[RMDB]
RNA sequence: GGGAACGACUCGAGUAGAGUCGAAAAAUCAAUUACGUUAUAAGUGGAGAUUACCUGAAUGAUCCCGACUUCAAUGUAUCCUAUAGUCUUAAGGAGAAAGAGAUAAAGCAGGUAGGGAGGUUAUUCGGAGGGCUAGAAGAUUCGUCUUCUAGCCCUCAAAAGAAACAACAACAACAAC
Reactivity to DMS in 0.01 (KOAc 150mM, MgCl2 10mM, bicine 150mM(pH8.5), 24C), signal-to-noise 1, nucleotides 027 to 126: a040u010c050a010a300u000u030a020c020g000u010u020a130u000a130a120g000u010g000g000a300g010a050u000u000a030c020c030u000g000a050a110u000g010a100u000c010c030c000g030a080c020u000u000c080a040a110u000g000u000a140u000c010c000u000a100u000a060g020u000c120u010u000a120a080g000g020a010g000a040a120a020g000a080g000a070u000a030a090a180g010c070a020g000g050u000a070g000g000g000a070g000g020u000u000a010u010u000c080g030